[RMDB]
Conditions: 150 mM KOAc, 10 mM MgCl2 and 150 mM bicine (pH 8.5), 24 C.
This 207-nucleotide RNA was probed chemically with DMS and 2A3.
For DMS the reverse transcriptase was MarathonRT.
The 2A3 profile rests on 2,967 reads.
2A3 adducts were read by reverse transcription with SuperScript II with manganese.
RNA sequence: GGGAACGACUCGAGUAGAGUCGAAAAGAGCUCGUCUCCGUCAUCGUCCACAAUUGAGAGUCUGAUGGCGAUGAUUGGGCGAUUGUCAUCCUCGACCACGAGUGAGUCGACACCGAGACAUCGAUUAUCAUGCUCAUAGAACGGGGUCCCGAGUUCGUGCACACUAAAUGUUCGCAUUUAGUGUGCAAAAAGAAACAACAACAACAAC
Reactivity to DMS in 0.01 (KOAc 150mM, MgCl2 10mM, bicine 150mM(pH8.5), 24C), signal-to-noise 1, nucleotides 027 to 156: g080a150g040c030u000c030g010u000c010u000c030c040g020u000c000a070u000c020g030u000c020c070a110c180a070a230u030u010g000a210g030a130g010u010c040u000g050a140u000g030g020c050g000a010u010g000a120u000u000g030g000g010c000g030a100u000u000g030u030c010a140u000c010c030u000c010g000a130c080c040a100c070g000a150g000u020g000a040g050u010c030g000a060c090a150c100c000g040a110g000a080c010a050u010c010g000a190u000u000a160u010c010a100u000g110c010u010c000a110u000a190g000a070a150c000g000g000g060g030u000c000c010c040g010a050g000u000u000c040g010
Reactivity to 2A3 in 0.01 (KOAc 150mM, MgCl2 10mM, bicine 150mM(pH8.5), 24C), signal-to-noise 5, nucleotides 027 to 156: g010a010g040c010u000c020g040u030c040u010c060c020g020u010c020a040u020c010g110u060c050c030a050c070a150a160u300u300g100a150g020a040g140u070c100u170g120a150u070g050g000c010g000a000u000g010a010u050u120g000g000g000c010g030a040u060u140g080u060c040a040u030c030c010u000c010g040a090c050c020a110c090g050a020g080u210g020a010g020u010c020g020a030c040a050c130c020g010a010g010a040c020a030u080c060g090a130u080u120a050u210c030a010u110g050c010u010c030a070u090a130g040a090a050c040g000g000g020g010u020c010c030c010g010a040g010u000u020c010g030